[RMDB]
RNA sequence: GGGAACGACUCGAGUAGAGUCGAAAAUGCUUUCGCUAACGUGAGGGACACGAGGGAUGCUGGCCUGCAGCAACCAAGGCACGCGUCGCCCCUCGAGGCGAUUGCGCCGUCACGAUGCUUUGACCAACAGUCGGACAACCUUCGGGUUGUCCGACUGAAAAGAAACAACAACAACAAC
Reactivity to DMS in 0.01 (KOAc 150mM, MgCl2 10mM, bicine 150mM(pH8.5), 24C), signal-to-noise 1, nucleotides 027 to 126: u030g000c050u000u000u040c120g000c030u000a070a140c120g010u010g020a050g000g010g070a100c090a050c070g000a210g000g040g000a140u010g000c050u000g000g040c060c040u000g080c130a000g000c040a000a030c030c100a090a130g000g000c160a070c110g000c000g010u000c040g000c000c000c000c070u000c280g030a160g010g000c050g010a010u010u000g030c000g000c070c100g000u000c050a030c090g020a100u010g030c060u000u000u000g000a250c050c020a050a090
Reactivity to 2A3 in 0.01 (KOAc 150mM, MgCl2 10mM, bicine 150mM(pH8.5), 24C), signal-to-noise 1, nucleotides 027 to 126: u130g000c020u000u080u150c030g000c000u030a090a100c040g040u100g020a100g010g060g030a000c040a010c180g070a030g010g000g070a070u110g000c030u030g000g050c100c070u180g110c040a010g050c000a000a060c010c000a020a050g080g000c050a000c080g020c030g020u020c010g050c000c010c000c010u070c050g070a180g000g010c000g010a000u130u220g000c030g030c010c040g110u000c010a010c040g010a000u090g000c000u100u050u080g080a050c030c040a010a020